[RMDB]
RNA sequence: GGGAACGACUCGAGUAGAGUCGAAAAACCUUUGUGGUUGAGUAACAAGGAGCUCAACAGCUUAAUCUCUAGCGUGCUGCCCAUUGGGCAGUCGGGUUAAGACAUGAGCUCCCGCCCUCAACCACUCUGGUAAAACCGAUCACGUUCGCGUGAUCGGCCUAACGGUCUACUUCGGUAGACCGUUAGGAAAAGAAACAACAACAACAAC
Reactivity to 2A3 in 0.01 (KOAc 150mM, MgCl2 10mM, bicine 150mM(pH8.5), 24C), signal-to-noise 2, nucleotides 027 to 156: a000c020c000u010u010u020g020u010g000g000u000u010g000a020g040u120a130a220c130a150a000g000g020a000g000c000u010c030a040a100c040a140g030c000u020u010a040a020u050c080u020c190u300a070g150c020g210u220g030c060u000g020c000c000c130a300u240u300g000g000g000c010a030g030u000c020g000g020g010u020u000a030a000g040a120c060a170u020g000a000g000c000u010c010c000c010g010c020c000c000u000c000a000a000c000c000a000c000u000c000u010g000g030u040a070a020a070a040c010c000g010a000u000c000a000c010g020u070u060c170g040c000g140u020g000a000u010c000g000g050